[RMDB]
RNA sequence: GGGAACGACUCGAGUAGAGUCGAAAAGAUAUGGAGCCAGAACUACCCACAAGAGGCGUUCGGAAACGAACGCUACCCACCUUGUGGCUGGCUCCUAAGUCAAAACGACCAUGUUCGCAUGGUCGAACGAGUGUGUAUUGUUCGCAAUACACACUCGAAAAGAAACAACAACAACAAC
Reactivity to DMS in 0.01 (KOAc 150mM, MgCl2 10mM, bicine 150mM(pH8.5), 24C), signal-to-noise 3, nucleotides 027 to 126: g010a030u000a300u000g020g010a020g000c000c000a010g000a090a080c140u000a170c300c020c000a010c030a020a010g010a050g030g000c030g000u000u040c010g030g000a090a110a150c000g010a000a000c030g030c010u000a020c050c060c050a300c060c010u000u010g000u000g030g030c020u000g010g000c000u010c010c010u000a000a080g000u000c040a090a020a070a140c010g000a030c000c000a040u000g000u000u000c210g030c010a000u010g000g000u000c010g010a020a110
Reactivity to 2A3 in 0.01 (KOAc 150mM, MgCl2 10mM, bicine 150mM(pH8.5), 24C), signal-to-noise 2, nucleotides 027 to 126: g060a010u080a050u230g020g000a010g000c010c020a010g020a130a100c160u200a130c160c010c000a000c000a020a010g000a010g030g010c000g000u000u010c000g000g020a110a080a070c020g000a000a000c010g000c000u000a020c020c010c000a040c010c000u000u000g000u000g040g020c000u000g000g000c000u000c000c000u000a000a000g000u000c050a000a000a050a140c030g000a000c010c000a000u000g040u060u080c300g020c100a000u000g020g000u000c010g000a030a020